[RMDB]
RNA sequence: GGGAACGACUCGAGUAGAGUCGAAAAGUCGCCGCAUCUACAUCAACGCCCAGCGCGGGCGAGGGAGGCGUCCUACGGGGGUGACCCAUUCGCCGGCAUGGUAGAGGACUGCAAGAUUGCCACGACGCCUCACCAUACCUUUCGAGGUAUGGUGAGGAAAAGAAACAACAACAACAAC
Reactivity to 2A3 in 0.01 (KOAc 150mM, MgCl2 10mM, bicine 150mM(pH8.5), 24C), signal-to-noise 1, nucleotides 027 to 126: g050u020c020g050c030c010g060c030a010u000c040u060a070c010a080u090c060a080a060c040g020c000c000c000a070g040c300g040c070g150g020g010c020g010a010g020g040g020a160g010g000c000g050u020c000c020u010a130c130g190g010g000g000g040u080g120a180c060c000c000a030u040u040c020g010c000c000g050g000c010a030u060g000g000u010a050g040a040g050g040a060c060u000g000c020a010a040g020a080u020u240g010c020c010a050c060g020a000c010g000
Reactivity to DMS in 0.01 (KOAc 150mM, MgCl2 10mM, bicine 150mM(pH8.5), 24C), signal-to-noise 1, nucleotides 027 to 126: g000u010c020g010c020c290g030c090a050u000c020u000a140c090a040u000c090a060a090c060g000c110c010c000a070g010c160g040c060g000g000g020c000g000a050g000g000g000a090g020g000c020g010u000c020c030u010a140c280g020g010g000g010g040u010g000a130c000c010c010a100u000u000c020g020c030c010g000g030c050a060u010g010g010u000a110g020a090g000g000a070c140u010g020c050a020a040g000a060u010u000g000c010c040a060c010g000a050c080g010